[RMDB]
RNA sequence: GGGAACGACUCGAGUAGAGUCGAAAACACGAGAUCGAUCGACAUGAGUACGUCAUGAGAGCGACAUGGGUACGACAUGGAUCCGUCACUAGCGGAUCAGUACCAUGUCGUGGUACUGCGAUCUAGAAUGAAGGUGUCACUUCGGUGACACCUUCAUAAAAGAAACAACAACAACAAC
Reactivity to 2A3 in 0.01 (KOAc 150mM, MgCl2 10mM, bicine 150mM(pH8.5), 24C), signal-to-noise 2, nucleotides 027 to 126: c090a000c070g070a000g040a050u090c030g020a030u040c050g080a040c100a120u100g090a000g040u200a140c090g150u050c160a030u010g030a030g000a000g130c030g000a010c000a010u080g170g000g110u140a020c000g030a080c100a190u090g100g010a000u000c030c000g100u120c060a170c300u260a080g040c020g000g010a010u000c000a030g000u010a030c040c000a000u010g010u000c020g010u000g010g000u010a000c010u030g040c010g000a000u000c000u020a020g080a230
Reactivity to DMS in 0.01 (KOAc 150mM, MgCl2 10mM, bicine 150mM(pH8.5), 24C), signal-to-noise 1, nucleotides 027 to 126: c030a250c110g000a040g050a030u000c040g020a170u010c030g000a170c070a130u090g020a070g000u000a000c030g010u000c070a100u000g010a060g030a140g000c050g010a010c010a000u000g000g020g010u020a010c000g000a200c280a130u010g000g000a000u000c000c000g060u010c070a090c260u010a200g000c010g010g000a010u000c030a040g020u000a040c050c000a040u000g010u000c030g000u000g000g000u000a060c060u010g000c040g010a030u000c000u000a120g020a170